[RMDB]
RNA sequence: GGGAACGACUCGAGUAGAGUCGAAAAGACGCCUUUAGAAGAAGAGGCUAGGGGGUAUUCCGUUGUGGGAUACUUAGUAAUAUGCAACGCUAAUUGCAUAAGAUUGUAGGACGGAAUUUACAGUCUUUAGAGAUAAGCACGUUCGCGUGCUUAUCAAUCACUGCCUACAGUUCGCUGUAGGCAGUGAAAAAGAAACAACAACAACAAC
Reactivity to 2A3 in 0.01 (KOAc 150mM, MgCl2 10mM, bicine 150mM(pH8.5), 24C), signal-to-noise 1, nucleotides 027 to 156: g040a000c040g030c010c000u070u070u110a240g050a270a010g030a050a020g030a030g010g010c010u020a040g000g070g000g000g000u000a010u000u000c010c010g030u020u100g090u130g070g010g010a010u030a060c010u030u030a020g010u030a020a100u000a010u100g000c010a020a060c140g020c200u120a110a030u090u000g000c000a010u000a020a020g050a090u020u070g070u050a020g030g070a010c060g030g060a020a000u080u060u040a040c010a020g010u010c000u070u040u090a130g030a000g000a030u000a000a000g010c000a000c010g000u030u090c280g010c000g070u000g000c000u000u000a000u020c000a000a000
Reactivity to DMS in 0.01 (KOAc 150mM, MgCl2 10mM, bicine 150mM(pH8.5), 24C), signal-to-noise 1, nucleotides 027 to 156: g040a120c030g000c010c010u000u000u000a080g000a100a210g010a130a090g010a030g010g030c030u010a080g070g040g030g030g030u010a090u010u000c010c000g020u000u000g030u010g010g000g000a140u010a010c040u010u010a110g010u000a040a150u000a050u010g010c010a010a070c060g090c090u000a060a130u000u000g020c020a090u010a020a060g020a060u000u000g010u000a080g040g020a160c000g040g000a090a300u000u010u000a040c010a030g010u000c040u000u010u000a080g010a240g010a060u000a010a030g010c000a010c010g000u000u010c280g020c050g040u000g010c010u000u000a000u010c000a050a100